[RMDB]
RNA sequence: GGGAACGACUCGAGUAGAGUCGAAAAGGCUUGACAACACAGUCUGGUGCCCACGACACGUAAUGUGCCCGGCUGACCAGUUGUCUGAUCCUAAUUAUGAUGCCUUGUUGAUUUCUAUGACUAAUCACGAGAGUAUCCUUCGGGAUACUCAAAAGAAACAACAACAACAAC
Reactivity to DMS in 0.01 (KOAc 150mM, MgCl2 10mM, bicine 150mM(pH8.5), 24C), signal-to-noise 5, nucleotides 027 to 129: g000g020c000u020u000g030a070c030a050a000c000a140c010a060g000u030c010u040g020g010u080g030c030c120c090a100c120g020a070c180a100c180g050u000a000a040u030g020u050g020c030c020c080g010g010c010u000g010a000c050c060a060g080u000u000g020u000c000u030g050a080u030c070c000u010a030a060u040u090a070u050g050a080u000g020c010c020u000u000g020u010u010g010a120u000u000u000c060u000a150u050g020a150c180u040a120a090u000c120a090c140g010a200
Reactivity to 2A3 in 0.01 (KOAc 150mM, MgCl2 10mM, bicine 150mM(pH8.5), 24C), signal-to-noise 7, nucleotides 027 to 129: g000g000c010u070u110g000a000c000a000a000c000a010c000a010g010u000c040u170g050g010u160g020c050c090c000a030c040g170a040c030a030c080g110u140a110a090u180g020u030g000c000c020c000g000g000c000u000g000a050c010c030a020g010u000u000g000u010c020u000g020a020u020c010c000u000a050a030u160u150a130u180g200a050u170g030c000c000u010u020g010u040u040g060a300u020u020u020c060u080a150u130g100a210c040u140a110a030u200c060a010c100g140a130